[RMDB]
RNA sequence: GGGAACGACUCGAGUAGAGUCGAAAAAGCUGCUCAGUAUACGUACUGAGCAGCAAGGGGUUGAAGCGGACACCCCUUCAGGCGCGCGCCCAUGCUCCGUACGCCGCCUCAUACGUGAGGCGGCGAAAUAGGUGUAUCUGGUUCGCCAGAUACACAACUUAUCUGUUGUGUUCGCACAACAGAUAAGAAAAGAAACAACAACAACAAC
Reactivity to 2A3 in 0.01 (KOAc 150mM, MgCl2 10mM, bicine 150mM(pH8.5), 24C), signal-to-noise 2, nucleotides 027 to 156: a000g000c000u020g020c000u010c000a010g000u010a040u020a130c220g010u000a050c000u000g000a000g010c000a000g000c000a000a010g010g000g000g000u040u120g110a180a050g080c040g000g020a010c010a000c040c000c000c000u010u150c090a040g000g000c050g020c040g040c000g030c070c020c010a000u020g030c020u000c010c000g060u020a030c040g010c000c000g050c010c030u030c000a130u110a090c300g070u050g000a000g000g110c000g000g010c020g020a000a000a010u110a000g020g060u000g000u000a000u000c000u010g000g040u030u030c170g000c050c010a010g000a000u000a000c010a000c000a000a000